[RMDB]
RNA sequence: GGGAACGACUCGAGUAGAGUCGAAAAGAUGUCAAAGUCCUGGGCUUCUGACCCUAUCAUCGUCCGCAGGGCGAUUAAGGCUGCAUCAAUCCGGUCGCCCAUCGGAAAUUCAUAGUGUGCGCCAUGAAUCAUGGUAUACGUUCGCGUAUACCAUGAUAAAAGAAACAACAACAACAAC
Reactivity to DMS in 0.01 (KOAc 150mM, MgCl2 10mM, bicine 150mM(pH8.5), 24C), signal-to-noise 7, nucleotides 027 to 126: g010a020u010g010u000c050a070a100a100g000u020c030c030u010g000g000g010c020u000u000c030u010g000a160c030c010c010u020a060u020c110a050u010c070g000u000c000c010g000c200a120g010g010g000c000g010a010u000u010a070a090g030g010c050u010g010c120a060u000c140a140a110u010c010c010g010g000u010c040g010c010c020c010a130u020c010g000g000a020a060a060u020u030c130a060u020a060g010u010g020u000g000c020g000c050c020a080u020g000a100
Reactivity to 2A3 in 0.01 (KOAc 150mM, MgCl2 10mM, bicine 150mM(pH8.5), 24C), signal-to-noise 9, nucleotides 027 to 126: g030a020u100g060u110c080a100a060a050g050u060c010c030u060g010g020g010c020u110u020c030u110g190a210c020c000c000u060a070u110c060a010u050c040g050u020c010c020g100c150a160g000g000g020c010g000a000u040u060a140a110g030g000c040u070g010c080a070u040c050a050a100u010c010c000g010g000u020c030g010c000c010c010a030u020c010g030g000a010a050a040u160u110c040a050u080a120g060u070g030u030g080c040g000c040c030a070u080g080a040
Record summary
Conditions: 150 mM KOAc, 10 mM MgCl2 and 150 mM bicine (pH 8.5), 24 C. This 177-nucleotide RNA was probed chemically with DMS and 2A3. It was measured as part of the RMDB library OK1LIB.